[RMDB]
RNA sequence: GGGAACGACUCGAGUAGAGUCGAAAAACGGUGCGGAAGUUCGCGCUUCCGUGAAACGCGAACAUCGGACGGUGGCUGCAAGUCGCAUCGCAAAACCGCGGCAAGUGGAGUUAGCGAGAGGAGGCUGAAACCAUCCAACACUUCGGUGUUGGAUGAAUCCAAAUCUUAACUUCGGUUAAGAUUUGGAAAAAGAAACAACAACAACAAC
Reactivity to 2A3 in 0.01 (KOAc 150mM, MgCl2 10mM, bicine 150mM(pH8.5), 24C), signal-to-noise 3, nucleotides 027 to 156: a000c060g020g020u070g020c010g010g050a090a050g020u080u140c060g000c010g000c050u090u030c020c040g040u070g030a070a030a000c050g010c010g000a030a000c000a080u090c060g000g030a020c030g020g030u020g030g000c050u040g050c070a060a040g010u040c020g010c050a070u010c010g000c040a050a070a030a010c030c010g020c010g040g000c080a110a070g000u050g050g020a070g010u090u070a030g030c020g040a020g000a020g040g040a000g020g000c020u040g050a080a060a040c030c000a000u020c000c000a000a000c000a000c000u000u110c240g050g000u000g000u000u010g000g000a000u000g000a000a010
Reactivity to DMS in 0.01 (KOAc 150mM, MgCl2 10mM, bicine 150mM(pH8.5), 24C), signal-to-noise 2, nucleotides 027 to 156: a040c040g010g020u000g010c020g030g030a050a110g000u000u000c100g010c040g000c000u000u010c030c190g050u010g030a060a050a000c010g000c000g000a030a060c000a190u020c100g010g010a050c080g010g010u000g010g000c020u000g070c030a070a130g040u010c020g030c030a180u000c020g000c040a090a050a120a140c030c030g020c060g020g000c060a090a140g030u000g000g000a170g020u000u000a120g020c020g010a050g050a100g020g000a070g020g020c020u010g010a070a040a100c090c010a010u000c000c010a000a020c000a000c010u010u030c260g090g020u000g000u000u000g000g000a010u000g000a010a070